Source information:
This 177-nucleotide RNA was probed chemically with 2A3 and DMS. DMS adducts were read by reverse transcription with MarathonRT. Source: RMDB library M2PK50, as collected in RNAgym. Conditions: 150 mM KOAc, 10 mM MgCl2 and 150 mM bicine (pH 8.5), 24 C.
RNA sequence: GGGAACGACUCGAGUAGAGUCGAAAACACACAAGGUUCGCCUUGUGUGCAAGAAUAGACGAAUACUACCGUAGAAGUAUUCACGUCACAUAACUACGGAAAUGGCGUUCUGCUUCGGCAGAACGAAUCCUACGAGUGACUUCGGUCACUCGUAGGAAAAAGAAACAACAACAACAAC
Reactivity to 2A3 in 0.01 (KOAc 150mM, MgCl2 10mM, bicine 150mM(pH8.5), 24C), signal-to-noise 2, nucleotides 027 to 126: c000a000c000a000c010a000a030g030g000u070u100c130g140c090c000u010u030g030u020g010u000g030c000a030a010g100a070a110u140a090g060a050c070g020a010a000u010a040c000u050a240c010c030g070u030a040g030a080a010g000u020a010u020u050c070a010c070g110u080c030a020c010a240u160a190a080c010u000a000c050g010g110a000a050a080u250g210g020c000g000u000u000c000u000g010c010u020u020c120g130g000c000a000g000a000a000c000g000a000a030
Reactivity to DMS in 0.01 (KOAc 150mM, MgCl2 10mM, bicine 150mM(pH8.5), 24C), signal-to-noise 1, nucleotides 027 to 126: c000a000c000a060c010a000a000g000g000u000u000c300g030c000c000u010u040g000u000g030u000g020c010a070a110g000a180a090u000a100g030a080c110g000a030a060u000a000c000u000a060c000c020g010u000a030g000a190a070g000u000a020u000u020c010a060c270g000u020c100a080c170a060u000a080a100c010u000a000c010g000g000a180a020a090u040g010g020c030g030u000u080c000u000g000c000u000u030c190g000g000c010a000g000a030a000c000g000a030a060